[RMDB]
RNA sequence: GGGAACGACUCGAGUAGAGUCGAAAACUGGGUGGGCUCUGAUCCUAUCUGUAGGGCUGGCCAAGUCCUUGUUCCACUCCUUCUUGCAGUGGAUCUUGCCGCUUCUCUGAAGAUGAUUGAAAUGCCCACAGCACUUGCAGAGCAAGCAGAAAAGACAUACCUACCCUGAUUUCGAUCAGGGUAGGUAAAAAGAAACAACAACAACAAC
Reactivity to DMS in 0.01 (KOAc 150mM, MgCl2 10mM, bicine 150mM(pH8.5), 24C), signal-to-noise 1, nucleotides 027 to 156: c040u010g010g050g030u000g000g040g060c020u000c050u010g000a070u010c000c050u000a100u000c060u000g010u000a100g000g010g070c070u000g000g010c090c080a070a140g020u000c100c020u060u020g000u010u000c020c020a070c010u000c010c130u010u010c140u000u000g030c130a040g000u000g060g040a100u010c010u000u000g030c000c020g020c000u000u010c010u010c040u010g000a090a050g010a040u010g010a120u000u000g010a100a060a070u000g010c050c000c040a100c000a050g000c040a080c020u020u010g030c040a100g050a130g040c000a050a070g050c030a120g000a070a040a050a040g020a130c050a300
Reactivity to 2A3 in 0.01 (KOAc 150mM, MgCl2 10mM, bicine 150mM(pH8.5), 24C), signal-to-noise 2, nucleotides 027 to 156: c000u020g000g000g120u010g000g000g030c010u040c090u050g010a000u000c010c000u020a180u060c030u020g190u180a040g020g020g000c050u050g080g000c140c030a060a020g020u080c060c040u120u220g090u110u030c020c020a000c010u020c020c030u170u300c060u110u170g020c040a000g010u000g000g000a000u000c020u000u020g040c010c010g000c030u300u160c020u040c020u050g040a020a000g090a160u120g000a020u020u020g060a060a160a160u170g000c000c000c000a000c040a000g020c020a030c010u000u070g010c010a030g070a010g180c000a040a000g000c030a010g220a030a110a020a000g060a010c050a040